[RMDB]
RNA sequence: GGGAACGACUCGAGUAGAGUCGAAAAGAUUCGCGAAGGGAUAUGGACAACUGCGAGUUCUGCAGAUUUUGGUCUUGAAGAAGGGCGAAGACGUUACGCUGCGGAAAAUCGACCUUUACCGCCAUUAUCUGUCCACCUAGUUCGCUAGGUGGACAGAAAAAGAAACAACAACAACAAC
Reactivity to DMS in 0.01 (KOAc 150mM, MgCl2 10mM, bicine 150mM(pH8.5), 24C), signal-to-noise 1, nucleotides 027 to 126: g000a180u000u010c070g000c080g020a120a070g010g000g000a080u000a070u000g010g020a050c010a070a150c010u000g000c010g010a160g040u000u000c190u020g010c030a010g000a150u000u020u010u000g060g000u000c050u000u010g010a100a090g000a080a050g000g000g000c140g000a060a090g000a110c050g030u000u000a060c200g010c120u010g010c040g000g040a050a060a070a140u000c030g000a130c100c000u000u000u000a170c190c190g000c080c060a030u000u010a060
Description:
An RNA of 177 nucleotides, treated with DMS and read out base by base. DMS adducts were read by reverse transcription with MarathonRT. For DMS, 654 sequencing reads were counted. The RNA was probed in 150 mM KOAc, 10 mM MgCl2 and 150 mM bicine (pH 8.5) at 24 C.